Description
Structure probing data (2A3 and DMS) for a 207-nucleotide construct. The RNA was probed in 150 mM KOAc, 10 mM MgCl2 and 150 mM bicine (pH 8.5) at 24 C. For 2A3, 6,565 sequencing reads were counted. 2A3 adducts were read by reverse transcription with SuperScript II with manganese.

RNA sequence: GGGAACGACUCGAGUAGAGUCGAAAACAACCUGGGAGUUACGUCCGGAUAUUGCUCCAGGGGCAAUAGAACGGUAGACAUCAACUGAUGCGAGAGCAUCUCAACUUAUGGACCUUAGUGUAUCGCAAGACGACCGGUCCCGUCGGAAUUGCGUAGAAAUCACUAUAGUAUUCGUACUAUAGUGAUUAAAAGAAACAACAACAACAAC
Reactivity to 2A3 in 0.01 (KOAc 150mM, MgCl2 10mM, bicine 150mM(pH8.5), 24C), signal-to-noise 7, nucleotides 027 to 156: c050a010a060c010c020u050g030g050g010a060g030u070u100a050c060g060u030c020c010g000g010a040u030a030u060u040g010c020u030c050c050a100g070g000g010g000c010a020a020u020a040g130a200a050c030g010g010u050a040g040a080c030a110u090c060a040a090c070u070g010a010u020g020c010g010a050g010a000g040c000a020u000c010u010c030a030a140c040u130u160a070u200g050g020a030c000c030u070u120a100g060u060g060u160a090u130c010g000c000a010a010g040a040c010g010a020c000c020g040g050u020c010c020c000g000u020c010g000g020a170a100u030u010g000c000g000u010a040g090a060
Reactivity to DMS in 0.01 (KOAc 150mM, MgCl2 10mM, bicine 150mM(pH8.5), 24C), signal-to-noise 5, nucleotides 027 to 156: c040a070a210c020c020u000g020g010g010a120g020u000u000a070c100g020u010c020c030g030g020a200u000a030u000u010g020c000u000c040c040a300g010g030g010g040c030a030a040u000a030g010a090a120c010g010g000u010a080g010a080c030a120u000c070a110a140c040u010g000a030u010g010c010g010a300g010a300g010c010a020u010c000u010c050a060a120c080u010u010a100u000g010g010a060c010c010u000u000a090g010u010g000u000a080u000c040g030c050a070a110g010a200c040g010a050c030c030g000g000u000c010c020c020g000u000c000g020g000a120a110u000u000g010c000g020u000a160g010a090